The record gives the reactivity of an RNA of 207 nucleotides to 2A3. For 2A3 the reverse transcriptase was SuperScript II with manganese. Conditions: 150 mM KOAc, 10 mM MgCl2 and 150 mM bicine (pH 8.5), 24 C.

[RMDB]
RNA sequence: GGGAACGACUCGAGUAGAGUCGAAAAGGGGUCGGAGCUAAGACAGCCGUGGAUUUCUUUGAUCGUACUGAAGCCUCCACGGUACGGGAGAAACACGGUCGAGCUCCGACGGAGGCACCCAAACUUUUUACGUACAGUUCGCUGUACGUAAAAAGAAGCAAAAUAGGUACUUCGGUACCUAUUUUGCAAAAGAAACAACAACAACAAC
Reactivity to 2A3 in 0.01 (KOAc 150mM, MgCl2 10mM, bicine 150mM(pH8.5), 24C), signal-to-noise 2, nucleotides 027 to 156: g050g010g040g010u020c000g000g000a000g040c020u080a130a000g060a040c000a020g010c010c030g000u000g010g170a280u000u210u070c060u300u250u020g010a000u010c000g000u010a000c010u010g010a090a050g000c000c000u020c000c010a020c000g020g020u020a000c000g000g000g000a010g000a000a010a000c020a000c010g030g030u040c010g040a000g000c000u000c000c000g000a010c000g000g000a000g000g030c010a020c000c040c000a020a110a230c000u050u010u000u000u000a000c000g000u000a000c000a000g000u010u090c190g070c130u010g000u010a000c000g000u010a000a000a000a000a000g000a010a010
It was measured as part of the RMDB library RNAMAK.